[RMDB]
Annotation: Structure probing data (2A3) for a 207-nucleotide construct. The 2A3 profile rests on 443 reads. Conditions: 150 mM KOAc, 10 mM MgCl2 and 150 mM bicine (pH 8.5), 24 C. Source: RMDB library M2RFPK, as collected in RNAgym.
RNA sequence: GGGAACGACUCGAGUAGAGUCGAAAACCAUUCCUUAUACCUUGAGUAUUGCUGAAUUCAGUUUAGCGUGCAUGCUCUUGGCUAUUCUCAUAGUGAUUGUCAAAUAUGGAGUUACUUAUUCGUCAAUAAAACACUACCACGUUCGCGUGGUAGUGAAGAGAACCAACAUCUUCGGAUGUUGGUUCUCAAAAGAAACAACAACAACAAC
Reactivity to 2A3 in 0.01 (KOAc 150mM, MgCl2 10mM, bicine 150mM(pH8.5), 24C), signal-to-noise 1, nucleotides 027 to 156: c000c000a020u000u030c000c020u080u080a080u060a020c000c000u040u050g000a040g000u070a070u240u170g000c030u010g010a300a200u300u170c020a180g110u050u040u300a070g000c060g000u060g000c030a030u040g000c000u000c000u000u000g000g060c020u070a080u100u100c060u000c110a220u100a080g150u110g130a070u040u180g050u120c020a010a000a110u050a020u100g060g000a020g050u070u090a060c040u060u050a100u100u040c020g000u010c030a090a060u080a150a110a010a000c020a030c000u000a000c060c000a000c020g040u000u050c140g000c000g100u000g020g000u000a000g000u010g000a000a010